[RMDB]
RNA sequence: GGGAACGACUCGAGUAGAGUCGAAAACUAGAGGUAGCGGAUCGUCAGAAUAACGAUACGCGCCGCACGGCUAAUGGCCGACCGCAAGAGACGAUUAACGUCAAUCUGCGCGCAUAAGCAGAAUUUGCAAAACACAACUCUUCGGAGUUGUGUUUUGAAAAGAAACAACAACAACAAC
Reactivity to DMS in 0.01 (KOAc 150mM, MgCl2 10mM, bicine 150mM(pH8.5), 24C), signal-to-noise 1, nucleotides 027 to 126: c020u020a100g000a150g060g040u000a020g060c000g010g000a010u000c010g030u000c060a180g040a190a080u000a120a000c040g010a000u000a000c000g010c000g000c040c010g000c040a120c000g000g000c020u000a170a190u050g000g010c010c000g000a260c240c040g000c000a010a110g000a100g010a000c020g000a300u000u000a010a080c020g010u000c020a020a080u000c050u000g040c060g000c300g020c140a080u050a080a120g010c060a110g000a010a070u000u000u010g090
Reactivity to 2A3 in 0.01 (KOAc 150mM, MgCl2 10mM, bicine 150mM(pH8.5), 24C), signal-to-noise 1, nucleotides 027 to 126: c030u020a030g030a050g180g040u180a100g010c000g060g000a040u000c000g040u000c020a090g070a300a180u150a070a010c000g020a020u010a040c000g000c000g000c030c000g000c020a050c000g000g000c020u090a210a070u190g130g000c000c070g030a070c100c070g010c010a000a040g090a000g020a050c000g030a080u260u280a260a100c000g060u000c010a010a140u120c010u040g030c000g000c040g000c020a080u080a240a000g040c040a000g080a060a130u080u090u140g040